The record gives the reactivity of an RNA of 177 nucleotides to DMS and 2A3. DMS adducts were read by reverse transcription with MarathonRT.
RNA sequence: GGGAACGACUCGAGUAGAGUCGAAAACUAGGUCCGCCGCCUUGUAUCAUACGAGCGUGUGUAUACCCGUGCGACCCAAGGCGGCGGAACUAGUCACGAGCGCCCUUCCAUCGGAGCUAGGUAGAAUCUCCGUAUUCAAUUUCGAUUGAAUACGGAGAAAAGAAACAACAACAACAAC
Reactivity to DMS in 0.01 (KOAc 150mM, MgCl2 10mM, bicine 150mM(pH8.5), 24C), signal-to-noise 3, nucleotides 027 to 126: c000u000a000g010g010u000c000c000g020c020c000g000c000c000u000u000g000u030a210u000c020a000u000a030c020g000a080g020c080g000u010g030u010g000u060a090u050a030c030c000c020g040u010g000c060g000a020c120c300c000a000a020g000g010c000g000g010c000g010g010a000a000c000u000a000g000u000c050a090c110g000a020g000c080g000c020c000c010u010u010c070c080a120u020c090g000g020a090g000c020u000a050g010g000u000a100g000a160a130u030
Reactivity to 2A3 in 0.01 (KOAc 150mM, MgCl2 10mM, bicine 150mM(pH8.5), 24C), signal-to-noise 4, nucleotides 027 to 126: c000u000a010g020g010u000c000c000g000c000c000g000c000c000u000u010g010u000a020u020c010a020u030a070c030g050a140g140c140g060u060g030u030g060u120a070u140a160c000c000c000g010u000g000c010g010a010c020c060c000a000a000g000g000c000g000g000c000g000g000a000a000c000u010a010g000u000c000a010c040g080a040g040c020g050c000c000c000u050u040c050c020a100u070c050g060g010a030g030c030u040a060g070g100u090a070g050a110a100u000